Source: RMDB library OK3TST, as collected in RNAgym.
An RNA of 207 nucleotides, treated with 2A3 and read out base by base.
The RNA was probed in 150 mM KOAc, 10 mM MgCl2 and 150 mM bicine (pH 8.5) at 24 C.
As a SHAPE reagent, 2A3 marks flexible, mostly unpaired nucleotides at the ribose 2'-OH.
RNA sequence: GGGAACGACUCGAGUAGAGUCGAAAAGAUGUGCCGCUUCUCCACAGCGAUCUUCUGGUGCGGGACCUGUAGGUGGUUCCUCACAAAGUAGUACAUCGGAGAACUUUCGUCUAUGCUGCCGUACAGGGUCAGGUAGCGCACCUCUCGGAUGGACUGGCACCUUACCCCGAUUCGUCGGGGUAAGGUGAAAAGAAACAACAACAACAAC
Reactivity to 2A3 in 0.01 (KOAc 150mM, MgCl2 10mM, bicine 150mM(pH8.5), 24C), signal-to-noise 1, nucleotides 027 to 156: g040a050u090g080u020g120c070c000g000c070u000u040c010u000c020c000a030c090a150g000c000g150a250u050c000u130u000c070u150g000g060u040g040c000g000g000g020a070c000c000u120g000u190a130g120g270u180g040g000u060u040c000c010u070c010a030c000a000a180a000g140u090a000g050u070a010c000a000u060c000g000g030a100g010a030a030c050u050u170u050c050g050u000c080u040a070u080g180c000u000g000c010c000g130u100a130c130a300g000g010g060u150c010a010g070g000u080a020g010c010g000c140a070c000c000u060c000u000c090g130g000a030u010g010g050a010c000u000g060g000